[RMDB]
RNA sequence: GGGAACGACUCGAGUAGAGUCGAAAAGCUACAUAAGCAAUGAAUUGACUUUCUUCUCCAGGAACAGGCUCGAUGUGGUAGCAUCGUCCUUUGUAACGAUCAAGACUGGUUAGCCCAUCGGUCCACACAUAACGUGAGCAUUCGUGCUCACGUUAUGAAAAGAAACAACAACAACAAC
Reactivity to 2A3 in 0.01 (KOAc 150mM, MgCl2 10mM, bicine 150mM(pH8.5), 24C), signal-to-noise 4, nucleotides 027 to 126: g000c000u040a030c090a250u240a140a030g050c040a020a120u120g040a100a110u160u050g080a100c120u060u060u020c020u070u000c040u000c010c020a010g120g000a100a050c040a110g030g010c020u030c040g010a030u030g100u110g050g110u080a030g030c030a010u030c020g020u010c020c040u070u090u160g130u060a120a040c070g020a040u090c050a090a050g060a080c030u050g050g110u060u050a080g090c020c000c010a020u030c020g020g000u020c020c010a020c000a000
Reactivity to DMS in 0.01 (KOAc 150mM, MgCl2 10mM, bicine 150mM(pH8.5), 24C), signal-to-noise 5, nucleotides 027 to 126: g010c020u000a080c210a090u010a110a080g030c030a090a080u000g010a100a060u020u000g020a140c110u000u000u000c030u010u000c030u000c020c080a110g000g020a090a080c160a060g000g010c040u000c030g020a030u000g000u000g010g010u000a110g000c090a030u000c040g010u000c040c040u010u020u010g010u010a090a090c110g010a030u000c080a130a090g010a070c070u000g000g000u000u010a150g010c010c020c010a080u000c050g010g000u000c010c030a100c240a120
Chemical mapping of a 177-nucleotide RNA with 2A3 and DMS. It was measured as part of the RMDB library OK2TRN.